[RMDB]
RNA sequence: GGGAACGACUCGAGUAGAGUCGAAAAGGGCUGGGAGAAGUCAGAAGACACACAUUUAUCAAUUAAGUUUGCCAUCUUAAAUGGAUGUAGUUCGUGGUGCCCCAAAACAAUAUCAUAGUAACAUCAAAGAUCACUGAUCACAGAACACCAUAACACAGCGCUAUUAUGAGUUCGCUCAUAAUAGCGCAAAAGAAACAACAACAACAAC
Reactivity to 2A3 in 0.01 (KOAc 150mM, MgCl2 10mM, bicine 150mM(pH8.5), 24C), signal-to-noise 2, nucleotides 027 to 156: g020g000g000c010u030g020g000g010a050g050a050a000g030u010c000a020g100a140a020g110a020c020a000c000a000c000a150u030u100u160a090u080c020a100a020u120u020a000a040g080u010u060u170g090c000c010a020u000c000u050u180a200a180a100u210g030g000a030u020g030u040a050g000u000u100c180g010u040g000g000u020g000c080c000c020c020a010a020a000a000c050a080a100u060a030u150c060a050u020a110g020u050a140a020c020a100u080c090a070a050a000g000a030u060c020a020c120u100g020a000u060c050a010c020a090g030a040a020c000a010c110c000a030u040a140a030c150a000c010a110
The record gives the reactivity of an RNA of 207 nucleotides to 2A3. Reactivities are given for positions 27 through 156.